[RMDB]
Overview: An RNA of 177 nucleotides, treated with 2A3 and DMS and read out base by base. Conditions: 150 mM KOAc, 10 mM MgCl2 and 150 mM bicine (pH 8.5), 24 C. Source: RMDB libraries RFM100 and RFMREP, as collected in RNAgym.
RNA sequence: GGGAACGACUCGAGUAGAGUCGAAAAAACAGUAAUCCAACCCAGUACGAGAGGAACCGUUGGUUCAGAUAAUUGGUAACUGCGGUUAGCUGAAAAGCUAGUGCCGCCAAGCUACCAUCUGUAGGAUCUUCCGAUCAGUAUUCGUACUGAUCGGAAGAAAAGAAACAACAACAACAAC
Reactivity to 2A3 in 0.01 (KOAc 150mM, MgCl2 10mM, bicine 150mM(pH8.5), 24C), signal-to-noise 3, nucleotides 027 to 126: a000a010c110a030g020u080a070a060u040c000c010a000a010c020c000c000a010g030u020a010c030g000a030g000a040g100g050a030a000c000c000g040u010u030g020g000u050u040c010a000g000a020u120a190a130u150u110g010g000u000a020a000c000u020g000c000g000g020u040u010a000g000c020u040g030a000a000a080a000g000c000u010a020g080u090g280c010c000g040c040c030a060a010g010c010u000a000c000c000a010u000c010u020g030u040a080g070g140a080u010
Reactivity to DMS in 0.01 (KOAc 150mM, MgCl2 10mM, bicine 150mM(pH8.5), 24C), signal-to-noise 2, nucleotides 027 to 126: a070a030c040a060g000u010a090a070u030c020c010a040a040c070c020c100a050g000u000a110c010g010a140g000a140g000g000a050a060c160c300g000u000u000g010g000u000u010c050a050g000a090u060a100a040u000u030g000g000u000a010a030c010u000g000c010g000g020u010u010a010g010c000u000g010a090a080a140a010g010c000u000a030g010u030g020c020c000g000c010c110a090a020g030c000u000a000c000c000a010u040c060u000g020u000a060g000g010a080u000